[RMDB]
RNA sequence: GGGAACGACUCGAGUAGAGUCGAAAAGGGCAGUUUGACUGGGGCGGUCGCCUCCUAAAAGGUAACGGAGGCGCGCGAAGGUCCGCUCGGGACGGUCGGCAACCGUCCUUUUGAGUGCAAGAGCGUACCCUGCUCCUCUAUUCGUAGAGGAGCAGGGAAAAGAAACAACAACAACAAC
Reactivity to DMS in 0.01 (KOAc 150mM, MgCl2 10mM, bicine 150mM(pH8.5), 24C), signal-to-noise 2, nucleotides 027 to 126: g000g020g010c130a200g030u060u000u000g020a000c010u020g000g000g030g000c000g010g010u000c040g030c020c020u000c000c000u010a080a060a200a160g080g000u090a080a160c300g090g000a000g020g020c000g000c040g000c000g010a300a150g020g020u020c010c020g040c010u000c010g020g000g000a020c020g030g000u000c100g010g050c160a050a120c000c000g010u000c030c000u000u000u090u000g030a010g000u000g090c160a030a080g040a090g000c030g010u060a210
Reactivity to 2A3 in 0.01 (KOAc 150mM, MgCl2 10mM, bicine 150mM(pH8.5), 24C), signal-to-noise 2, nucleotides 027 to 126: g030g000g010c040a010g000u030u050u090g050a050c030u060g010g000g070g070c020g010g060u180c010g000c000c000u000c000c000u050a100a160a090a060g300g010u070a090a020c070g020g000a000g000g000c000g000c000g000c000g000a060a000g030g000u010c000c000g000c000u000c000g000g010g000a000c010g000g000u090c100g160g040c010a010a020c010c000g000u000c000c000u030u050u090u050g010a000g000u060g020c040a110a020g010a040g140c040g010u040a040